The record gives the reactivity of an RNA of 207 nucleotides to 2A3. Source: RMDB library ARCHII, as collected in RNAgym. The RNA was probed in 150 mM KOAc, 10 mM MgCl2 and 150 mM bicine (pH 8.5) at 24 C. Values are in units of 0.01, from 0 to 300, in steps of 10.

RNA sequence: GGGAACGACUCGAGUAGAGUCGAAAAAGCUUGAGUGACGCUCGUAAAUCUCCAUUCAAAAAACUAACUGCAAACGACGAACGUUUCGCACUCGCCGCUUAAAUCCGGUGAGCCUUGCAACAGCACGCUGAUGGGCUGGGCAAGGGGGUAGCAAUACGUUCUCAAGAUUGUUCGCAAUCUUGAGAACAAAAGAAACAACAACAACAAC
Reactivity to 2A3 in 0.01 (KOAc 150mM, MgCl2 10mM, bicine 150mM(pH8.5), 24C), signal-to-noise 1, nucleotides 027 to 156: a000g020c010u030u090g000a070g010u020g060a040c070g000c050u030c100g150u090a070a120a120u010c070u030c030c030a110u180u260c150a120a040a000a010a060a010c070u100a100a080c050u040g000c010a050a010a000c030g090a000c050g030a200a080c010g020u000u020u060c100g000c010a040c040u000c010g000c000c000g000c040u040u070a030a030a030u050c010c000g000g000u040g050a010g000c000c010u000u000g000c020a150a160c000a130g000c010a000c030g070c050u020g040a100u180g100g160g070c040u010g000g010g000c020a030a010g000g000g050g030g000u000a030g030c010a010a090u040a160c040